[RMDB]
RNA sequence: GGGAACGACUCGAGUAGAGUCGAAAAGAUAUGGAUCGGUACCAGGGAGCUUGCAUGGGUCGGAAACGACCCAUGAGCUUUGAUCUGGACGCCGAUCCUAAGUCAAAGUGGCACUUCGGUGCCACAAGGCACUACAUAAGUUCGCUUAUGUAGUGCCAAAAGAAACAACAACAACAAC
Reactivity to DMS in 0.01 (KOAc 150mM, MgCl2 10mM, bicine 150mM(pH8.5), 24C), signal-to-noise 2, nucleotides 027 to 126: g020a060u000a300u000g000g000a010u000c000g000g020u000a200c010c010a000g000g020g010a010g010c020u010u000g020c030a020u020g020g000g020u000c000g020g010a090a070a230c000g020a050c000c000c010a010u000g010a070g020c010u000u000u000g000a070u000c020u010g010g020a120c200g010c010c020g010a010u000c000c000u020a010a120g000u010c010a030a170a130g010u000g000g000c000a000c000u000u000c220g010g040u000g010c000c010a030c000a040a050
Reactivity to 2A3 in 0.01 (KOAc 150mM, MgCl2 10mM, bicine 150mM(pH8.5), 24C), signal-to-noise 1, nucleotides 027 to 126: g030a010u080a050u200g040g000a000u020c020g010g000u010a090c000c020a000g000g030g000a020g000c050u100u160g130c100a000u010g040g010g010u010c020g040g050a120a100a050c000g020a000c010c030c000a000u000g000a010g000c020u130u110u070g020a050u000c020u010g000g080a130c190g000c000c040g000a010u000c000c000u020a040a010g030u030c040a000a210a000g010u000g000g000c000a000c020u060u090c300g020g020u000g000c000c000a000c000a020a020
Conditions: 150 mM KOAc, 10 mM MgCl2 and 150 mM bicine (pH 8.5), 24 C. Chemical mapping of a 177-nucleotide RNA with DMS and 2A3. It was measured as part of the RMDB library TTRDES. 2A3 adducts were read by reverse transcription with SuperScript II with manganese.